An RNA of 177 nucleotides, treated with 2A3 and DMS and read out base by base.
RNA sequence: GGGAACGACUCGAGUAGAGUCGAAAAUUUGUGAGGGUGAGGAGUGUCAGUGUAUGCGGAUACAUUAAUGUGAAGGGGAGAUCAAGGUGGUGUGGUCCGCCUCUCGUUUUUGGCAAAAACUUGCGAGCUAUAUUAAAUAAUUCGUUAUUUAAUAUAGAAAAGAAACAACAACAACAAC
Reactivity to 2A3 in 0.01 (KOAc 150mM, MgCl2 10mM, bicine 150mM(pH8.5), 24C), signal-to-noise 3, nucleotides 027 to 126: u070u040u060g050u030g020a050g020g010g000u070g040a040g020g000a040g030u070g020u070c050a030g010u010g050u080a040u100g050c020g040g040a030u070a050c010a020u090u220a180a110u200g040u040g070a060a020g020g000g020g000a090g000a030u070c040a030a000g030g000u020g010g000u020g030u020g020g020u010c020c030g000c010c020u020c000u000c000g020u040u010u020u110u090g020g000c020a050a000a000a000a130c010u020u090g000c020g010a010g010
Reactivity to DMS in 0.01 (KOAc 150mM, MgCl2 10mM, bicine 150mM(pH8.5), 24C), signal-to-noise 4, nucleotides 027 to 126: u020u020u040g020u010g010a100g010g000g020u010g000a080g000g010a060g020u010g020u020c080a070g020u020g010u010a030u010g010c100g000g000a060u020a040c060a050u020u020a040a060u020g000u020g010a080a060g000g000g000g020a080g010a060u020c090a060a070g010g020u010g010g020u000g010u010g000g020u010c040c040g000c030c040u010c020u000c030g000u000u000u000u020u020g010g010c050a060a060a100a060a070c080u010u010g010c060g010a090g000
For 2A3 the reverse transcriptase was SuperScript II with manganese. For DMS, 8,732 sequencing reads were counted.